RNA sequence: GGGAACGACUCGAGUAGAGUCGAAAAGACGCCUUUAGAAGAAGAGGCUAGGGGGUAUUCCGGUGUGGGAUACAUAGUAAUAUGCAACGCUAAUUGCAUAAGAUUGUAGGACGGAAUUUACAGUCUUUAGAGAUAAGCACGUUCGCGUGCUUAUCAAGAUAGAACACUGCUUCGGCAGUGUUCUAUCAAAAGAAACAACAACAACAAC
Reactivity to DMS in 0.01 (KOAc 150mM, MgCl2 10mM, bicine 150mM(pH8.5), 24C), signal-to-noise 1, nucleotides 027 to 156: g000a120c090g040c030c040u010u010u030a120g000a160a220g030a130a130g020a050g010g010c040u000a120g000g010g040g030g020u010a100u010u000c010c030g010g000u010g040u000g010g030g010a190u010a040c010a050u000a110g000u000a130a200u000a000u000g000c000a040a090c050g000c150u010a110a120u000u030g050c020a030u010a040a090g000a080u000u010g030u000a060g010g000a160c040g030g000a060a150u000u010u010a060c020a060g030u010c020u010u000u010a170g000a190g010a010u010a010a010g010c000a020c010g000u000u010c280g050c010g050u000g020c000u000u010a000u000c010a010a040
Reactivity to 2A3 in 0.01 (KOAc 150mM, MgCl2 10mM, bicine 150mM(pH8.5), 24C), signal-to-noise 4, nucleotides 027 to 156: g060a030c040g030c020c010u060u070u110a160g040a220a030g010a070a000g000a030g020g010c040u050a060g010g010g010g010g000u030a070u040u050c040c040g100g010u140g040u090g110g010g020a020u020a080c020a010u060a020g080u090a050a090u030a030u050g000c000a010a020c070g040c190u120a070a130u060u020g010c000a000u020a050a030g030a050u040u060g010u060a010g030g060a010c070g020g040a040a040u130u060u040a070c020a010g000u000c000u020u070u080a100g020a000g000a070u000a000a000g000c000a000c000g020u030u050c160g010c000g090u000g000c000u000u000a000u000c000a000a000
An RNA of 207 nucleotides, treated with DMS and 2A3 and read out base by base. For DMS the reverse transcriptase was MarathonRT. Conditions: 150 mM KOAc, 10 mM MgCl2 and 150 mM bicine (pH 8.5), 24 C. The data come from the RNA Mapping Database (RMDB), library M2RFPK. For 2A3, 3,037 sequencing reads were counted. Reactivities are given for positions 27 through 156.